[RMDB]
RNA sequence: GGGAACGACUCGAGUAGAGUCGAAAACCGGAAUGGUUCCGCCCUGAUCGGGCCAUGCAAUAGUUGCCAACGACAACUAUGCUCCGGUUGCUCAGGCAGCGUAACGCUGCUUGAAAGACCACAUGAAUUAGCGCGACAUUGUUCGCAAUGUCGCGAACUUAAGCUUUUUGUUCGCAAAAAGCUUAAGAAAAGAAACAACAACAACAAC
Reactivity to 2A3 in 0.01 (KOAc 150mM, MgCl2 10mM, bicine 150mM(pH8.5), 24C), signal-to-noise 5, nucleotides 027 to 156: c000c000g000g000a060a060u060g010g030u290u300c020c070g020c030c100c130u200g080a220u130c010g000g000g000c000c000a010u040g000c010a040a300u000a010g000u000u000g010c040c080a160a070c150g080a140c020a000a000c030u000a000u000g000c010u000c010c010g000g000u000u010g000c020u000c000a000g000g000c000a000g010c010g050u170a100a050c290g000c000u000g000c000u000u000g000a000a000a000g030a000c010c030a030c040a180u210g170a180a120u170u100a120g090c000g000c000g010a000c000a000u000u010g030u030u070c190g010c100a010a000u000g000u000c000g000c000g000a010a000
Reactivity to DMS in 0.01 (KOAc 150mM, MgCl2 10mM, bicine 150mM(pH8.5), 24C), signal-to-noise 3, nucleotides 027 to 156: c000c000g000g020a060a100u000g000g030u000u000c010c030g040c100c100c090u000g000a130u000c080g020g020g000c000c010a010u010g030c100a110a040u000a020g020u000u000g000c010c030a160a200c230g000a160c000a000a010c000u000a010u000g020c070u010c020c020g030g020u000u000g000c180u000c020a040g000g020c010a010g000c010g010u000a150a150c120g060c000u000g010c000u000u000g010a020a130a160g000a300c000c020a140c090a040u000g010a130a180u000u010a090g000c020g010c010g020a050c010a050u000u000g030u000u000c250g030c020a010a010u010g000u000c000g030c020g010a010a030

Background: Chemical mapping of a 207-nucleotide RNA with 2A3 and DMS. Conditions: 150 mM KOAc, 10 mM MgCl2 and 150 mM bicine (pH 8.5), 24 C. The 2A3 profile rests on 4,061 reads. For 2A3 the reverse transcriptase was SuperScript II with manganese.